The record gives the reactivity of an RNA of 207 nucleotides to DMS and 2A3. DMS adducts were read by reverse transcription with MarathonRT. For 2A3, 4,000 sequencing reads were counted. 2A3 adducts were read by reverse transcription with SuperScript II with manganese.
RNA sequence: GGGAACGACUCGAGUAGAGUCGAAAAGUCACGAGGAGACUCGUGACAGCAUGCUUCGGCAUGCAAGGGUCGGCAUGGCAUCUCCACCUCCUCGCGGUCCGACCUGGGCAUCCGAAGGAGGACGCACGUCCACUCGGAUGAACAAUGGAGAGCCAAAUAUACUGACUACUUUCGAGUAGUCAGUAUAAAAAGAAACAACAACAACAAC
Reactivity to DMS in 0.01 (KOAc 150mM, MgCl2 10mM, bicine 150mM(pH8.5), 24C), signal-to-noise 2, nucleotides 027 to 156: g020u000c040a020c000g020a000g010g000a300g000a300c000u000c040g010u050g000a010c000a100g030c000a020u000g000c000u000u010c300g010g030c000a030u020g020c000a040a040g000g000g000u010c030g010g030c150a190u010g020g020c020a120u010c000u000c000c000a100c000c060u000c000c030u000c100g010c110g000g000u010c020c000g000a080c050c030u010g000g010g010c010a010u000c010c010g020a100a080g020g020a200g010g000a040c040g010c160a100c140g000u020c000c020a080c010u000c030g010g020a050u000g010a120a140c070a150a120u000g000g010a020g000a300g000c000c030a050a090a220
Reactivity to 2A3 in 0.01 (KOAc 150mM, MgCl2 10mM, bicine 150mM(pH8.5), 24C), signal-to-noise 4, nucleotides 027 to 156: g000u000c000a000c010g010a000g020g020a060g010a060c000u000c000g000u000g000a000c000a000g010c000a010u000g010c010u070u040c180g100g000c010a000u000g000c000a010a090g020g000g000u000c010g000g000c180a200u070g030g000c020a300u020c000u000c000c000a000c010c010u030c010c000u090c080g110c140g080g030u020c010c010g010a000c000c010u010g000g000g000c000a010u000c000c020g050a090a040g030g050a220g010g010a010c020g130c110a110c230g010u000c000c000a000c000u000c010g000g000a000u000g010a060a040c080a050a080u070g000g010a000g000a000g020c000c000a000a030a000